RNA sequence: GGGAACGACUCGAGUAGAGUCGAAAAAUACCGGCUUAGCCUAGUGGUUACUUCUAAAUGAAUACACUCUGUCCAGUGAUUCUGGGUUCACCACCCACCCCACACCACGGGCGCCGUCCGGUAUCUUCCGUAAGUGAAAGUUCGCUUUCACUUACGGAAAAGAAACAACAACAACAAC
Reactivity to 2A3 in 0.01 (KOAc 150mM, MgCl2 10mM, bicine 150mM(pH8.5), 24C), signal-to-noise 1, nucleotides 027 to 126: a000u000a000c000c000g030g010c010u080u170a060g000c020c000u020a130g000u000g020g010u050u140a080c040u090u090c020u160a050a100a210u200g030a040a000u160a160c000a000c040u070c050u110g150u150c050c030a030g010u000g020a010u030u000c000u020g010g020g020u070u060c010a010c050c000a000c010c030c010a010c020c000c000c000a030c010a010c040c000a000c000g000g000g010c000g030c030c050g050u070c010c020g040g030u000a000u030c030u010u000

Annotation:
This 177-nucleotide RNA was probed chemically with 2A3. Values cover nucleotides 27 to 126. For 2A3, 1,125 sequencing reads were counted. The reactions ran in a buffer of 150 mM KOAc, 10 mM MgCl2 and 150 mM bicine (pH 8.5), at 24 C.